[RMDB]
RNA sequence: GGGAACGACUCGAGUAGAGUCGAAAACGAUAUUGGUGAGGUUGAGCACACCCCGUAAUGGUCGGGUCACAACGUAGUCUCCUUCCGAGCCGUACUUGCCGCGUACGUCUUGGAACACGCGGAUGUAAGGAGUCGCAGGAUUCGUCCUGCGACUCCUAAAAGAAACAACAACAACAAC
Reactivity to 2A3 in 0.01 (KOAc 150mM, MgCl2 10mM, bicine 150mM(pH8.5), 24C), signal-to-noise 1, nucleotides 027 to 126: c010g000a030u130a050u170u230g110g020u050g000a170g090g020u000u000g070a030g050c010a000c000a000c000c000c000c000g030u070a070a090u260g300g000u160c030g010g010g010u030c100a030c000a080a160c220g030u030a030g000u040c030u030c000c110u020u000c000c000g030a060g000c000c000g000u130a000c070u130u120g150c070c040g000c000g110u120a280c010g000u040c000u000u300g120g000a080a000c000a000c000g010c000g000g050a030u030g000u090a030